[RMDB]
RNA sequence: GGGAACGACUCGAGUAGAGUCGAAAAAGUCUUGCUCUGUUGCCCAGGCUGGAGUGCAAUGGCACAAUCACAGUUCACUGUGACCUUGACCUCCUGGGCUCAAGUGAUUCUCCCACUUAAGCGCCCCGAGUAGCUGGGACCACAGGCACACACCACCACAGAGCAUUCUGUUCGCAGAAUGCUCUGUAAAAGAAACAACAACAACAAC
Reactivity to 2A3 in 0.01 (KOAc 150mM, MgCl2 10mM, bicine 150mM(pH8.5), 24C), signal-to-noise 1, nucleotides 027 to 156: a010g030u040c040u000u000g010c000u030c080u130g100u020u090g000c000c040c040a060g020g020c100u090g020g010a020g080u070g090c040a120a300u250g040g000c050a040c030a060a050u040c030a000c040a160g100u290u180c100a160c160u000g000u050g000a040c010c000u110u120g110a230c000c000u010c000c030u000g000g000g000c000u010c000a000a000g010u000g010a020u080u000c010u060c000c020c010a040c080u070u060a230a050g060c000g090c090c020c030c040g040a060g000u090a030g030c040u040g010g000g030a030c000c000a030c010a060g000g100c020a000c020a020c030a040c090c000a000c080c000
The data come from the RNA Mapping Database (RMDB), library OK3TST. Structure probing data (2A3) for a 207-nucleotide construct. The reactions ran in a buffer of 150 mM KOAc, 10 mM MgCl2 and 150 mM bicine (pH 8.5), at 24 C. For 2A3 the reverse transcriptase was SuperScript II with manganese.